[RMDB]
RNA sequence: GGGAACGACUCGAGUAGAGUCGAAAAUGUUACAGAGCUAACGUUAAAUGAAUUUAUGAUUGGCGAAGGACAUUAUGAUGUCAGACUUAAAUUACAUUCACGAAACAAGAAGCACACAAUGUAUGUAAUUCCUUCAGGCAUUCGUGCCUGAAGGAAUAAAAGAAACAACAACAACAAC
Reactivity to 2A3 in 0.01 (KOAc 150mM, MgCl2 10mM, bicine 150mM(pH8.5), 24C), signal-to-noise 3, nucleotides 027 to 126: u040g010u000u020a190c020a040g060a020g050c060u040a090a000c020g040u060u090a120a150a050u060g100a020a060u070u030u010a090u080g130a300u010u050g030g030c080g040a090a030g090g020a030c050a060u080u040a120u300g160a060u110g020u040c030a010g030a080c000u010u010a020a020a010u040u050a060c000a000u010u080c000a000c090g080a010a110a040c020a000a160g100a130a000g080c000a010c020a000c020a080a150u060g040u040a050u010g040u050a100
Reactivity to DMS in 0.01 (KOAc 150mM, MgCl2 10mM, bicine 150mM(pH8.5), 24C), signal-to-noise 2, nucleotides 027 to 126: u000g000u000u010a030c060a090g000a300g060c030u000a050a060c050g000u040u030a000a060a150u040g000a020a090u010u020u000a040u010g000a150u000u000g050g030c110g010a200a230g040g000a010c050a000u000u010a060u000g060a050u020g040u000c060a050g000a090c030u000u030a060a050a010u060u010a010c230a050u010u000c010a030c050g020a140a070a060c120a010a150g000a110a040g000c000a100c200a030c160a010a030u010g020u000a040u000g010u000a000